RNA sequence: GGGAACGACUCGAGUAGAGUCGAAAAGAUAUGGAUCGUGGAGGGAGCAUAUCGGAAACGAUGAUGCUUUGAUCUCCCGAUCCUAAGUCAAAACAAGAACACUGUACUUCGGUACAGUGUUCUUGAACCCUUCCUAAUGGUUCGCCAUUAGGAAGGGAAAAGAAACAACAACAACAAC
Reactivity to DMS in 0.01 (KOAc 150mM, MgCl2 10mM, bicine 150mM(pH8.5), 24C), signal-to-noise 4, nucleotides 027 to 126: g010a040u000a300u000g010g000a000u000c000g010u010g040g000a020g010g010g000a010g010c010a010u000a040u000c000g000g000a080a120a200c010g010a000u000g010a020u000g010c000u000u010u010g010a060u020c000u000c000c000c000g000a000u000c000c000u000a000a080g010u010c040a100a050a130a250c020a000a010g000a000a010c000a020c000u000g010u000a010c000u000u020c200g030g030u000a000c010a000g000u000g000u000u000c000u000u000g000a080a140
Reactivity to 2A3 in 0.01 (KOAc 150mM, MgCl2 10mM, bicine 150mM(pH8.5), 24C), signal-to-noise 5, nucleotides 027 to 126: g020a020u040a020u170g000g000a000u000c020g160u300g010g010a000g020g010g000a000g000c000a000u010a010u030c020g000g030a070a070a020c020g020a010u260g070a030u010g180c000u220u090u050g070a080u020c010u000c000c000c000g000a000u000c000c000u010a070a000g030u010c040a010a030a110a190c000a010a000g010a000a000c000a000c000u010g000u020a000c010u030u190c300g020g000u000a000c000a000g010u000g000u000u000c000u010u000g000a000a000
The record gives the reactivity of an RNA of 177 nucleotides to DMS and 2A3. DMS adducts were read by reverse transcription with MarathonRT. The data come from the RNA Mapping Database (RMDB), library TTRDEL. Conditions: 150 mM KOAc, 10 mM MgCl2 and 150 mM bicine (pH 8.5), 24 C. For 2A3 the reverse transcriptase was SuperScript II with manganese.